[RMDB]
Structure probing data (DMS) for a 177-nucleotide construct.
RNA sequence: GGGAACGACUCGAGUAGAGUCGAAAAGAGUCGAUGCUUGAAUUAAAACAAGUCCAAGCGUUUUGGGACAUUGUCAAAGAAGAAGGAGGAAGUCAGUCAGAUGGAAUACGCAAUUGAAAUGCGCCGACUUGCUCCUUUUUUUCGAAAAAGGAGCAAGAAAAGAAACAACAACAACAAC
Reactivity to DMS in 0.01 (KOAc 150mM, MgCl2 10mM, bicine 150mM(pH8.5), 24C), signal-to-noise 2, nucleotides 027 to 126: g010a080g050u000c040g030a050u010g010c010u000u000g010a080a040u010u000a090a120a150a200c210a060a080g020u000c030c000a030a080g030c200g010u000u020u000u000g020g000g030a050c000a090u040u000g000u000c080a060a060a170g010a050a090g000a030a020g030g010a050g010g010a070a020g000u020c080a050g000u000c040a060g020a100u000g000g020a070a080u000a080c060g020c060a060a090u000u000g010a050a040a110u000g030c060g000c060c020g000a160

It was measured as part of the RMDB library OK2TST. For DMS, 959 sequencing reads were counted.